Annotation: The record gives the reactivity of an RNA of 177 nucleotides to 2A3. The data come from the RNA Mapping Database (RMDB), library OK1LIB. The 2A3 profile rests on 570 reads. Reactivities are given for positions 27 through 126.
RNA sequence: GGGAACGACUCGAGUAGAGUCGAAAAUGUUGGUAUAAACGGUGGUCAUCAACAAACUUACACUGGAGAGUCCCAAAACAGCUCCUGUCAAUAAACCUUUCCAUCGAUCGGAAUUUUGCGACAACAAGCCUCUAUGUCCGUUCGCGGACAUAGAGGCAAAAGAAACAACAACAACAAC
Reactivity to 2A3 in 0.01 (KOAc 150mM, MgCl2 10mM, bicine 150mM(pH8.5), 24C), signal-to-noise 1, nucleotides 027 to 126: u000g000u040u000g020g000u090a210u050a110a210a000c020g000g060u060g050g020u030c000a000u100c010a000a010c080a000a130a000c030u020u000a070c050a030c130u070g040g000a000g000a000g050u020c000c020c000a050a080a030a080c010a010g000c000u050c030c100u060g050u090c000a000a060u050a060a050a300c010c020u010u080u020c000c150a070u220c050g000a030u070c020g010g000a020a100u060u120u120u100g120c140g000a000c000a060a000c000a040a040